[RMDB]
RNA sequence: GGGAACGACUCGAGUAGAGUCGAAAAGAUUCGAACCCACGCUACCGCCGUGAGAGGGCGGCGUCCUAGGCCGCUAGACGACGGGGCCAGAACCGAUCCGAGCUGUCUAGCAUAGCUCACACCGCUAAGCUGAGCAGGGGUUCGCCCCUGCUCAGCUAAAAGAAACAACAACAACAAC
Reactivity to 2A3 in 0.01 (KOAc 150mM, MgCl2 10mM, bicine 150mM(pH8.5), 24C), signal-to-noise 1, nucleotides 027 to 126: g000a000u240u180c210g000a160a150c000c020c020a020c090g060c000u220a300c010c170g040c000c050g080u090g000a180g000a100g150g230g000c000g000g000c090g060u070c000c130u050a000g000g240c000c000g010c000u030a030g000a000c000g000a000c000g050g000g030g000c040c040a240g000a130a240c040c100g030a120u100c070c090g000a000g000c010u000g150u000c030u010a030g120c130a010u000a000g000c000u000c070a010c000a000c020c040g000c080u080a030

Structure probing data (2A3) for a 177-nucleotide construct. It was measured as part of the RMDB library OK1LIB. The RNA was probed in 150 mM KOAc, 10 mM MgCl2 and 150 mM bicine (pH 8.5) at 24 C. For 2A3, 397 sequencing reads were counted.